[RMDB]
RNA sequence: GGGAACGACUCGAGUAGAGUCGAAAAUGGUACUCAAUAUAUAGUGUGAGUACCAAAUGGCAUGUUCGUAAUUUUGAAGGCAAAUUCAAAAUUCAAAUUCCGACAAAAGCGGCCAUCCGCACUAAUACCACGCUGACGCUUUCGAGCGUCAGCGUGGAAAAGAAACAACAACAACAAC
Reactivity to 2A3 in 0.01 (KOAc 150mM, MgCl2 10mM, bicine 150mM(pH8.5), 24C), signal-to-noise 1, nucleotides 027 to 126: u040g000g000u000a000c000u000c000a110a000u030a000u090a040u020a300g220u190g000u000g240a000g000u000a010c000c000a030a030a030u000g000g000c090a040u010g000u150u220c000g060u060a000a000u000u180u000u120g000a000a000g100g030c300a210a000a050u000u070c100a040a110a120a100u030u020c000a000a000a000u070u000c060c030g000a000c060a070a300a110a000g040c040g030g000c040c000a000u000c000c000g130c030a000c070u100a000a060u040a060